RNA sequence: GGGAACGACUCGAGUAGAGUCGAAAAAGAAGUUUUCACUUUUCCAAUGGCAAGAAUGUCCAAGUAUCAAAAUACUGCAUGAUUCAGUGGGAAAUAAAAUCAGUUGCAUUGGAAAAAGUACAAAGAGAAUUGCAAUUGGCACGUUGGAUGGACGAAAAAAUCAGUGGGAGUUCGCUCCCACUGAUUUAAAAGAAACAACAACAACAAC
Reactivity to 2A3 in 0.01 (KOAc 150mM, MgCl2 10mM, bicine 150mM(pH8.5), 24C), signal-to-noise 1, nucleotides 027 to 156: a010g100a020a040g020u000u040u070u070c020a020c000u000u040u000u000c000c010a000a010u010g090g010c000a010a000g010a080a040u040g090u030c030c010a070a000g030u020a060u100c070a040a060a080a130u100a220c090u120g050c060a060u070g040a050u150u110c000a020g070u000g000g050g020a000a180a000u100a040a070a000a010u060c010a040g000u020u010g010c000a000u000u000g000g000a060a000a030a000a000g040u060a030c010a010a120a020g100a030g010a100a120u110u100g000c010a030a100u010u040g110g000c010a020c080g090u150u170g050g090a100u150g000g020a050c070g010a120a160a030